[RMDB]
RNA sequence: GGGAACGACUCGAGUAGAGUCGAAAAGUCAUGCCUUCGGGCAUGACAGGUACCGAGAGGUACCAAAUAGCGUACAGCAGACACAGACUGUACGCUAAAAAAGUGUGUGUUCAAUAAGUGCCAAUUGAACACACACUAAAAUGGUACAAGUGUGUGAGCCAUAAUUAAUGUUCGCAUUAAUUAUGGCAAAAGAAACAACAACAACAAC
Reactivity to DMS in 0.01 (KOAc 150mM, MgCl2 10mM, bicine 150mM(pH8.5), 24C), signal-to-noise 1, nucleotides 027 to 156: g010u000c000a000u000g000c000c020u020u000c300g030g030g020c020a000u020g010a000c000a000g030g020u000a070c000c000g020a300g010a300g010g060u000a010c010c010a020a020a090u000a020g020c000g050u020a020c010a050g030c040a190g030a110c020a040c110a090g040a080c000u000g010u010a000c000g000c000u050a010a010a030a100a040a030g000u000g020u000g050u000g010u000u000c010a040a000u010a050a040g050u000g000c050c110a110a030u000u000g010a050a010c000a010c020a000c040a010c000u000a000a020a110a150u030g020g010u000a090c120a020a050g050u000g000u020g010u000g020a240
Reactivity to 2A3 in 0.01 (KOAc 150mM, MgCl2 10mM, bicine 150mM(pH8.5), 24C), signal-to-noise 4, nucleotides 027 to 156: g000u010c000a000u000g000c010c000u040u070c230g080g020g000c000a000u000g000a000c000a000g000g010u010a000c020c020g020a030g010a030g090g010u000a010c000c000a000a060a040u040a000g000c000g000u010a000c000a000g060c040a010g040a100c030a000c000a060g060a040c000u000g000u000a000c000g010c000u010a030a000a000a010a010a010g010u000g000u000g000u000g000u010u010c000a020a000u120a210a070g140u080g240c040c030a010a010u000u000g000a000a010c000a000c010a000c000a000c000u000a000a000a000a000u080g020g010u060a020c040a090a040g020u020g010u000g010u040g120a010